[RMDB]
RNA sequence: GGGAACGACUCGAGUAGAGUCGAAAAGGCGACUUCGGUCGCCAGCGAAGGGGUCAACGUGUCCUUGGAUUUACUUUUGACGCUCUGAAGCCUCCACGGAGCGAUAAGUUGUCAGGACCGUUGACGGAGGCACCCAGGUUAGAGACUUCGGUCUCAAAAUACUUGUAGCCUUCGGGCUACAAGUAUUAAAAGAAACAACAACAACAAC
Reactivity to 2A3 in 0.01 (KOAc 150mM, MgCl2 10mM, bicine 150mM(pH8.5), 24C), signal-to-noise 1, nucleotides 027 to 156: g000g000c000g000a030c030u070u120c250g190g000u020c000g040c000c000a000g010c000g090a060a110g090g000g140g000u040c000a000a000c000g120u090g010u260c040c070u100u230g000g030a160u250u300u090a100c030u120u110u110u280g260a050c040g000c000u000c000u000g020a040a010g000c000c000u030c000c000a020c010g010g000a000g000c010g000a010u040a040a060g070u240u230g300u300c090a000g000g000a000c000c000g010u000u000g000a000c020g020g000a000g000g000c000a030c030c000c000a000g110g120u190u300a050g000a000g000a000c010u110u100c290g110g010u060c000u020c000a160a110